[RMDB]
RNA sequence: GGGAACGACUCGAGUAGAGUCGAAAACUCCUCUCUGGACUUGGGACCCUUUUUCUUUGGAGUUGCGUCCAUCGGGGGCUUCGGGGGACGAGGCUCGUCUCCUGUGCUUCUCAAAGAAGACAGAGUCGGCCCGCCCCUCCGUCGCGACCCGAUGGACCUGUUGAUAGAUCUUCGGAUCUAUCAACAGAAAAGAAACAACAACAACAAC
Reactivity to 2A3 in 0.01 (KOAc 150mM, MgCl2 10mM, bicine 150mM(pH8.5), 24C), signal-to-noise 2, nucleotides 027 to 156: c020u020c010c020u020c020u010c060u110g080g060a150c050u060u070g000g050g020a060c020c010c000u050u120u060u100u080c070u150u120u150g020g000a050g000u030u050g050c040g000u000c000c000a010u010c000g000g000g030g010g000c000u000u010c010g000g000g000g000g000a000c010g020a140g020g000c110u130c250g040u010c020u050c010c050u020g030u090g140c010u000u000c040u060c080a100a140a060g020a000a000g000a000c000a000g000a000g010u010c020g010g000c020c010c000g000c040c010c000c020u020c020c000g010u000c010g000c030g160a300c000c000c010g000a000u000g000g010a000c000